This 207-nucleotide RNA was probed chemically with 2A3. For 2A3 the reverse transcriptase was SuperScript II with manganese. The 2A3 profile rests on 868 reads. Conditions: 150 mM KOAc, 10 mM MgCl2 and 150 mM bicine (pH 8.5), 24 C. Values cover nucleotides 27 to 156.

[RMDB]
RNA sequence: GGGAACGACUCGAGUAGAGUCGAAAAUUCGAGAUGGGCCACGUUCCGAACGAAGAGAUGCGGGAAGAAGGGAUCAGCAUCCGAGAGGGAGAGGACGGUAAAGAGCAUUGGAACGCCGAGGGGACACCUCCCAAGAAGGAAAAAAGAGAAUUCAAGACAGCUAGUAACAGUUCGCUGUUACUAGCUGAAAAGAAACAACAACAACAAC
Reactivity to 2A3 in 0.01 (KOAc 150mM, MgCl2 10mM, bicine 150mM(pH8.5), 24C), signal-to-noise 1, nucleotides 027 to 156: u070u060c060g050a000g030a060u050g030g010g020c050c010a030c100g040u100u010c020c000g040a080a050c050g030a050a050g060a000g000a020u050g050c040g030g030g000a030a010g030a000a020g060g010g000a040u010c090a020g000c030a040u050c040c020g070a060g000a000g070g000g000a050g000a020g000g000a010c030g010g040u050a120a120a000g040a010g000c020a010u090u060g040g030a040a010c050g060c140c000g080a020g000g000g000g010a020c020a030c050c020u000c000c000c010a010a010g080a030a030g050g010a040a000a070a000a000a040g050a000g010a010a040u170u080c030a000a050g100a080